[RMDB]
Conditions: 150 mM KOAc, 10 mM MgCl2 and 150 mM bicine (pH 8.5), 24 C. Chemical mapping of a 177-nucleotide RNA with DMS and 2A3. For DMS, 1,477 sequencing reads were counted. Values cover nucleotides 27 to 126.

RNA sequence: GGGAACGACUCGAGUAGAGUCGAAAAUUCAGGGAUCAUUCUAUAGUCGUUUCUAGAGAAGUUCUCUGAAUGUGUAGAGCACUGAAACCACGAGGAGGAGGUGUGGUGUCUGUCUGAGCAUGAAGCUCUUCACUCCCGUAUUCGUACGGGAGUGAAGAAAAGAAACAACAACAACAAC
Reactivity to DMS in 0.01 (KOAc 150mM, MgCl2 10mM, bicine 150mM(pH8.5), 24C), signal-to-noise 1, nucleotides 027 to 126: u000u000c000a000g000g010g000a010u020c000a110u000u010c000u010a060u000a020g020u010c300g020u000u060u000c000u000a070g000a040g030a030a020g000u000u000c000u000c000u000g000a000a000u000g000u020g010u000a050g000a110g020c070a040c040u000g020a150a170a060c000c040a090c050g030a080g000g000a130g000g010a070g000g030u000g030u000g000g050u000g020u000c000u020g000u020c030u000g030a130g000c030a100u000g010a190a040g000c120u000
Reactivity to 2A3 in 0.01 (KOAc 150mM, MgCl2 10mM, bicine 150mM(pH8.5), 24C), signal-to-noise 3, nucleotides 027 to 126: u010u000c000a000g000g000g000a000u010c020a270u030u000c020u030a080u030a040g040u100c110g160u120u170u010c030u010a040g000a000g010a050a010g020u000u010c000u010c000u000g000a010a000u020g030u000g060u070a070g030a020g050c070a040c100u100g060a060a060a020c010c010a040c020g040a080g070g030a010g030g020a040g000g020u060g010u040g030g030u050g020u010c020u070g060u010c080u060g040a030g020c020a090u130g100a120a040g000c000u000